[RMDB]
RNA sequence: GGGAACGACUCGAGUAGAGUCGAAAAGAAAAAACAAAAACAAAACCUAUGUCUGUAGUAUGUAUAUUUGUGCAUUUAAAUGUUUGUGCCCAUGGACUUGUGUGUGUGUGUGUGUGUGUGUGUGUGAAUGUAUGUCUAUAUAUAUAUGUAUGGUGUACGGGUGGAAAAUAUUCGUAUUUUCCACCCGAAAAGAAACAACAACAACAAC
Reactivity to 2A3 in 0.01 (KOAc 150mM, MgCl2 10mM, bicine 150mM(pH8.5), 24C), signal-to-noise 2, nucleotides 027 to 156: g000a000a010a000a000a010a000c010a010a010a300a000a000c010a000a010a300a000c300c000u150a060u020g040u000c020u050g030u010a010g000u000a060u030g080u030a010u020a090u170u110u060g030u050g000c000a000u010u000u300a210a230a070u090g010u030u100u080g000u060g000c000c000c010a010u020g020g000a030c020u050u000g010u020g020u000g000u000g000u000g010u030g000u000g000u010g000u000g000u020g000u000g030u000g000u010g000u000g050a030a000u030g000u060a000u020g010u000c000u070a010u020a030u000a010u000a030u000a000u300g000u020a080u150g050g000u070g060u190a020

This 207-nucleotide RNA was probed chemically with 2A3. It was measured as part of the RMDB library OK3TST. The 2A3 profile rests on 1,765 reads.